[RMDB]
RNA sequence: GGGAACGACUCGAGUAGAGUCGAAAAGAUAUGGACCCUUGGAGGAGCUUGUCGGAAACGAUUGAGCGCGAAACUCCUUGGGUCCUAAGUCAAAAUCGGGGGAUAUAGUUCGCUAUAUCCCCCGAAAGCUUAAUGUAGCGUUCGCGCUACAUUAAGCAAAAGAAACAACAACAACAAC
Reactivity to DMS in 0.01 (KOAc 150mM, MgCl2 10mM, bicine 150mM(pH8.5), 24C), signal-to-noise 1, nucleotides 027 to 126: g000a040u000a300u000g000g010a040c010c000c000u030u000g000g000a000g000g010a130g000c000u000u010g000u000c000g010g000a090a080a150c000g000a010u010u010g000a000g030c000g000c140g000a140a140a180c000u000c000c000u000u000g000g000g030u000c020c000u000a000a060g020u000c000a120a080a170a130u000c020g000g050g000g030g040a030u000a000u000a000g010u010u000c220g000c000u010a000u000a000u000c000c000c000c000c000g000a000a000a020

An RNA of 177 nucleotides, treated with DMS and read out base by base. DMS adducts were read by reverse transcription with MarathonRT. The data come from the RNA Mapping Database (RMDB), library TTRDEL.